Description: Structure probing data (DMS and 2A3) for a 177-nucleotide construct. DMS adducts were read by reverse transcription with MarathonRT. 2A3 adducts were read by reverse transcription with SuperScript II with manganese.
RNA sequence: GGGAACGACUCGAGUAGAGUCGAAAAAUAUCUCGCACAUUCUUCUUGAAAGUUGAUCCCUCAAAGGUAUUAGAAGCUAUCGGAAGAUCCUUGCAUAUAUUAAUAUCUAUGGGAGAGAAAUAUAAGAAUGAUAACGAAACUUCGGUUUCGUUAUCAUAAAAGAAACAACAACAACAAC
Reactivity to DMS in 0.01 (KOAc 150mM, MgCl2 10mM, bicine 150mM(pH8.5), 24C), signal-to-noise 1, nucleotides 027 to 126: a160u020a080u000c000u000c060g000c230a080c200a070u020u000c010u000u000c020u000u030g030a080a090a140g050u000u000g010a260u010c030c010c000u000c060a040a180a090g030g010u000a010u030u010a010g010a210a100g000c030u000a000u010c050g010g060a170a120g010a060u000c260c060u000u000g000c040a070u000a100u000a130u040u000a050a040u000a020u020c010u010a200u000g000g000g000a030g030a080g000a110a020a010u000a070u000a050a030g020a090
Reactivity to 2A3 in 0.01 (KOAc 150mM, MgCl2 10mM, bicine 150mM(pH8.5), 24C), signal-to-noise 1, nucleotides 027 to 126: a000u080a100u020c020u000c020g110c000a200c020a190u160u000c000u000u080c000u090u270g110a260a010a000g110u160u000g000a080u000c060c040c040u000c050a190a290a000g050g010u020a020u060u030a030g100a090a020g000c020u100a050u110c030g000g040a030a020g040a140u010c000c030u000u130g010c010a030u110a000u020a030u280u000a080a030u000a020u000c020u000a050u160g000g000g010a060g020a030g000a030a130a000u240a000u000a050a020g110a090
Notes
The 2A3 profile rests on 578 reads. The reactions ran in a buffer of 150 mM KOAc, 10 mM MgCl2 and 150 mM bicine (pH 8.5), at 24 C. It was measured as part of the RMDB library OK2TRN.